[RMDB]
RNA sequence: GGGAACGACUCGAGUAGAGUCGAAAAAUGGUAUGUAAGCAUGCGGAGCAUUGGUAGCUGGCUCCUAAAUAUCGGUUAUCAAACAAUUAAUUGGCGAAAACAAUUACGCUCUCGCUGCCUAAUCGAAGUACAGUAGAUUACUGGCUUUAUUCGACUAUCUUCAAUAGGUGUUCGCACCUAUUGAAGAAAAAGAAACAACAACAACAAC
Reactivity to 2A3 in 0.01 (KOAc 150mM, MgCl2 10mM, bicine 150mM(pH8.5), 24C), signal-to-noise 3, nucleotides 027 to 156: a010u160g040g010u160a100u120g050u070a090a040g010c010a030u180g010c000g020g000a000g010c020a040u010u020g000g000u000a000g000c010u010g040g000c040u100c040c000u100a060a080a000u200a050u100c010g010g000u020u010a020u020c000a000a010a080c000a020a030u050u040a030a020u010u020g030g030c060g110a130a080a000a000c000a000a030u040u020a040c050g000c000u000c020u030c020g000c010u000g010c000c010u030a050a040u100c040g010a020a000g000u070a300c010a010g020u060a040g000a220u080u070a030c010u000g010g000c000u050u040u060a100u060u070c020g010a020c060u020a000
Reactivity to DMS in 0.01 (KOAc 150mM, MgCl2 10mM, bicine 150mM(pH8.5), 24C), signal-to-noise 1, nucleotides 027 to 156: a110u000g010g070u010a030u000g000u000a070a120g000c020a000u010g070c110g030g000a020g060c000a300u000u010g030g000u000a000g030c040u010g020g000c280u000c090c030u010a040a070a180u000a040u020c020g000g010u000u010a000u000c050a060a050a130c090a100a200u000u000a100a090u010u010g010g000c010g000a200a170a140a190c030a010a060u000u000a050c100g050c030u000c020u000c030g010c000u000g000c040c030u020a030a100u010c000g010a010a090g000u010a070c030a060g130u010a050g010a160u000u000a100c020u010g000g020c030u000u000u000a160u010u000c010g020a070c060u000a100